[RMDB]
RNA sequence: GGGAACGACUCGAGUAGAGUCGAAAAAUUUGCGGCGAUGAUUGCACCGUAAUUUGGAAGAGCGCCGGAGCAGAUGCAGACAAACAAGCAAUGCGUGUCUUUGCUAGCUGGAUGAAGGUGAUGGGUGCCCCUACUUGGAUUUCGAUCCAAGUAGGGGAAAAGAAACAACAACAACAAC
Reactivity to DMS in 0.01 (KOAc 150mM, MgCl2 10mM, bicine 150mM(pH8.5), 24C), signal-to-noise 3, nucleotides 027 to 126: a050u020u010u000g010c030g000g020c060g010a130u020g000a110u010u030g020c070a120c000c020g020u020a040a010u010u020u020g000g000a140a020g010a100g010c070g000c020c010g000g000a110g000c020a050g010a090u020g020c040a060g000a080c080a100a020a040c160a090a090g000c050a040a070u010g000c130g010u020g000u010c050u000u010u020g000c020u000a050g020c000u020g000g000a080u010g010a070a090g000g000u010g020a130u000g000g010g010u000g000
Reactivity to 2A3 in 0.01 (KOAc 150mM, MgCl2 10mM, bicine 150mM(pH8.5), 24C), signal-to-noise 4, nucleotides 027 to 126: a000u120u070u110g020c040g000g020c080g030a040u110g010a070u130u150g060c050a010c020c030g020u040a040a100u080u050u080g120g060a120a020g010a030g040c050g000c030c000g040g000a020g000c020a020g020a080u100g030c010a000g060a090c050a020a120a010c030a100a070g070c040a040a060u090g010c040g040u050g030u030c030u070u100u080g020c030u050a030g010c020u000g010g050a060u060g050a060a030g020g040u080g020a030u060g020g020g020u080g050

The record gives the reactivity of an RNA of 177 nucleotides to DMS and 2A3. For DMS the reverse transcriptase was MarathonRT. Reactivities are rounded to 0.1 and cut off at 0 and 3. The RNA was probed in 150 mM KOAc, 10 mM MgCl2 and 150 mM bicine (pH 8.5) at 24 C.